[RMDB]
RNA sequence: GGGAACGACUCGAGUAGAGUCGAAAAGAUAUGGAUUCCUGGAGACAUGCCACUCGGAAACGAGUGAGCAACAGCUCUUGGAAUCCUAAGUCAAACAAUUACACUCCGUUCGCGGAGUGUAAUUGAACGAAGGUAUGAAGUUCGCUUCAUACCUUCGAAAAGAAACAACAACAACAAC
Reactivity to 2A3 in 0.01 (KOAc 150mM, MgCl2 10mM, bicine 150mM(pH8.5), 24C), signal-to-noise 2, nucleotides 027 to 126: g000a000u040a010u070g000g000a000u020u010c010c010u010g030g020a010g020a110c150a060u020g000c010c000a000c000u000c010g000g000a020a020a000c000g000a010g000u030g010a000g070c000a010a010c050a030g080c000u030c000u010u010g000g000a000a000u000c000c000u000a020a000g010u020c030a150a040a060c010a030a000u000u000a010c000a000c000u020c010c000g030u080u070c300g030c020g120g010a000g010u000g000u010a000a000u000u000g010a020a000
Reactivity to DMS in 0.01 (KOAc 150mM, MgCl2 10mM, bicine 150mM(pH8.5), 24C), signal-to-noise 4, nucleotides 027 to 126: g000a040u000a180u010g000g000a010u000u000c000c000u000g000g000a000g010a250c100a140u000g000c000c000a020c010u000c000g030g000a020a020a070c000g010a010g010u000g000a110g020c000a010a050c300a100g000c000u000c000u000u000g000g000a020a000u000c000c000u000a000a040g000u000c020a130a130a180c010a010a010u000u000a010c000a000c000u000c000c000g010u000u030c220g010c010g000g010a010g010u000g000u000a000a000u000u000g000a080a120
Chemical mapping of a 177-nucleotide RNA with 2A3 and DMS. For 2A3, 7,608 sequencing reads were counted. The reactions ran in a buffer of 150 mM KOAc, 10 mM MgCl2 and 150 mM bicine (pH 8.5), at 24 C. Reactivities are given for positions 27 through 126.